[RMDB]
RNA sequence: GGGAACGACUCGAGUAGAGUCGAAAAAUUAACCCAGCCUAAAUGAAGAGCAGGACAAAAGGUUCGUCUGCAAACACUCCUUGGUAGACAGAGGAUGGGGAAAUGGAUGUGGACUAUUUGGAAGUAAACGUUACCAUAACUUCGGUUAUGGUAACGUAAAAGAAACAACAACAACAAC
Reactivity to DMS in 0.01 (KOAc 150mM, MgCl2 10mM, bicine 150mM(pH8.5), 24C), signal-to-noise 3, nucleotides 027 to 126: a090u010u000a110a180c010c000c010a150g010c050c020u000a060a070a050u020g010a100a060g040a060g010c010a060g010g000a040c090a050a080a100a110g000g040u010u000c080g000u010c010u000g000c020a090a060a160c080a070c100u000c000c020u000u000g010g010u000a040g010a050c110a090g000a050g000g010a050u000g010g010g000g000a040a060a060u000g010g010a070u010g010u010g000g000a070c090u000a060u000u010u000g000g010a060a110g000u000a060a110
Reactivity to 2A3 in 0.01 (KOAc 150mM, MgCl2 10mM, bicine 150mM(pH8.5), 24C), signal-to-noise 2, nucleotides 027 to 126: a000u060u000a040a050c040c010c030a020g000c000c010u150a140a110a120u160g040a050a040g000a010g000c000a010g040g040a030c040a050a110a010a010g110g010u080u060c030g010u010c020u070g000c030a060a050a000c030a000c010u020c000c040u010u040g030g010u080a060g020a080c040a010g080a020g040g020a060u110g000g000g000g030a000a160a050u160g020g000a020u030g010u040g030g010a000c030u050a150u080u130u100g060g090a070a050g030u100a020a020